This 177-nucleotide RNA was probed chemically with 2A3 and DMS. The RNA was probed in 150 mM KOAc, 10 mM MgCl2 and 150 mM bicine (pH 8.5) at 24 C. High DMS reactivity at an A or C suggests that its Watson-Crick edge is free.

RNA sequence: GGGAACGACUCGAGUAGAGUCGAAAAGAUAUGGAUCUCCGGUAGACAUGCUCCAGGCUCGGAAACGAGCCCGGAGCAACAGCUACGGAGAUCCUAAGUCAAAACAUCUCUCGUUCGCGAGAGAUGACUAUAGUACCUAGUUCGCUAGGUACUAUAGAAAAGAAACAACAACAACAAC
Reactivity to 2A3 in 0.01 (KOAc 150mM, MgCl2 10mM, bicine 150mM(pH8.5), 24C), signal-to-noise 4, nucleotides 027 to 126: g010a000u030a010u050g000g000a000u000c000u010c010c020g050g040u040a010g020a060c150a270u300g000c010u010c010c000a000g000g000c010u000c000g000g000a010a020a010c000g000a000g010c020c000c000g000g010a000g030c000a000a010c010a000g000c000u010a000c010g000g000a000g000a000u000c000c000u000a000a000g000u010c000a010a030a070a140c010a000u000c000u000c000u000c010g030u080u070c300g000c020g120a000g000a000g000a010u000g000a010
Reactivity to DMS in 0.01 (KOAc 150mM, MgCl2 10mM, bicine 150mM(pH8.5), 24C), signal-to-noise 7, nucleotides 027 to 126: g000a010u000a040u020g000g000a010u000c000u000c000c000g010g020u010a000g000a040c100a100u010g010c000u000c000c000a030g000g010c000u000c010g020g000a010a010a020c000g010a010g010c000c000c020g000g000a020g020c000a010a010c140a150g000c000u000a020c000g000g000a010g010a000u000c000c000u000a000a070g000u000c010a130a100a130a250c020a010u000c000u000c000u000c000g020u000u010c270g020c010g010a010g000a010g000a010u000g000a110